Chemical mapping of a 177-nucleotide RNA with DMS and 2A3.

RNA sequence: GGGAACGACUCGAGUAGAGUCGAAAAAUUUCAGCACCAUAAAGAUAAUAAUAAAAAUCAACAAGAUACGAAAACCCCUUCCAUAUCAACAUCAUCACCACCCUUUUUGCGCCUUCCCUUCCCCGCAAGGGUGUCUUUCAUUCGUGAAAGACACCCUAAAAGAAACAACAACAACAAC
Reactivity to DMS in 0.01 (KOAc 150mM, MgCl2 10mM, bicine 150mM(pH8.5), 24C), signal-to-noise 1, nucleotides 027 to 126: a080u000u000u010c040a140g000c000a130c020c010a070u000a160a100a180g000a060u000a000a080u060a170a090u000a030a060a080a000a050u020c030a040a210c070a020a000g000a160u000a080c060g000a040a190a110a050c030c000c030c060u010u000c000c060a000u030a100u000c120a040a010c130a080u000c010a120u030c030a060c050c070a140c010c010c000u010u000u000u000u010g010c000g030c030c020u070u000c000c000c020u000u000c140c000c000c020g020c210a040
Reactivity to 2A3 in 0.01 (KOAc 150mM, MgCl2 10mM, bicine 150mM(pH8.5), 24C), signal-to-noise 2, nucleotides 027 to 126: a000u050u120u060c040a050g040c020a050c030c010a010u130a060a110a030g050a010u110a090a020u060a070a070u150a080a240a030a030a010u080c030a010a100c000a010a110g000a050u070a180c050g130a060a000a060a060c000c010c020c030u010u020c070c000a130u000a050u140c020a000a040c020a030u100c010a000u070c000a010c010c000a030c010c030c010u020u060u000u020u100g020c010g030c000c000u000u000c030c000c000u000u020c000c000c020c000g020c020a010

The 2A3 profile rests on 808 reads. The DMS profile rests on 1,006 reads.